[RMDB]
RNA sequence: GGGAACGACUCGAGUAGAGUCGAAAAUUGUGAGCACGUCGACGUGGUGGAAAACCUCGCCCGCGACCGAGCCAAGGCGUUGUUCGGUGCCGAAUUCGCCAAUGUGCAACCGCAUUCGGGCGCUCAGUAAUCAAGUGACAUUCGUGUCACUUGAUUAAAAAGAAACAACAACAACAAC
Reactivity to DMS in 0.01 (KOAc 150mM, MgCl2 10mM, bicine 150mM(pH8.5), 24C), signal-to-noise 5, nucleotides 027 to 126: u010u000g020u010g020a070g000c010a180c040g010u000c060g020a060c060g010u000g020g010u000g010g010a080a050a120a120c140c040u010c020g010c020c020c050g010c050g010a080c050c030g000a070g010c040c060a090a140g000g000c060g010u000u000g020u000u000c050g000g020u000g000c090c030g000a030a090u000u000c040g010c020c020a090a070u000g000u010g010c080a110a100c160c120g000c100a080u010u000c120g020g010g010c040g010c040u000c040a070g000
Reactivity to 2A3 in 0.01 (KOAc 150mM, MgCl2 10mM, bicine 150mM(pH8.5), 24C), signal-to-noise 3, nucleotides 027 to 126: u090u070g020u020g040a030g030c050a010c040g040u020c020g090a210c030g100u180g020g010u040g010g040a000a050a110a110c030c040u060c020g020c000c000c000g000c020g020a030c020c030g020a010g000c000c020a070a050g050g000c050g080u090u050g040u060u080c020g050g030u080g130c090c030g040a010a030u070u050c010g000c030c000a050a130u150g030u080g020c020a070a070c040c030g000c030a010u080u080c030g050g040g000c030g010c010u030c040a030g060